[RMDB]
RNA sequence: GGGAACGACUCGAGUAGAGUCGAAAACUCGCGCGAACAUAGAGGCGUGGAGCGCGACAUGAAUCAGCCUCCAUUAGAUUAAUGGUCGACAGAUCAGCGGCGAUCAGCGACCAAAUUAGAAGCCGCUACCGGAAGAGGAGACGCUCGACGGACGUCACAGUAUCGAUCCAUUCGUGGAUCGAUACUGAAAAGAAACAACAACAACAAC
Reactivity to 2A3 in 0.01 (KOAc 150mM, MgCl2 10mM, bicine 150mM(pH8.5), 24C), signal-to-noise 1, nucleotides 027 to 156: c010u040c030g000c020g000c000g030a170a040c020a060u070a050g020a020g040g000c030g010u020g040g000a050g030c000g040c000g090a050c180a140u300g080a070a070u120c040a000g000c010c020u000c010c000a110u160u190a020g080a130u130u210a050a070u100g000g000u000c000g010a110c110a100g000a000u010c010a010g020c000g000g000c020g010a020u020c020a000g000c030g010a000c000c000a000a020a000u180u050a080g020a130a000g010c010c000g000c030u030a020c050c050g000g000a080a000g000a080g070g000a010g010a010c030g050c000u000c020g060a000c030g030g000a000c000g020u020c000a010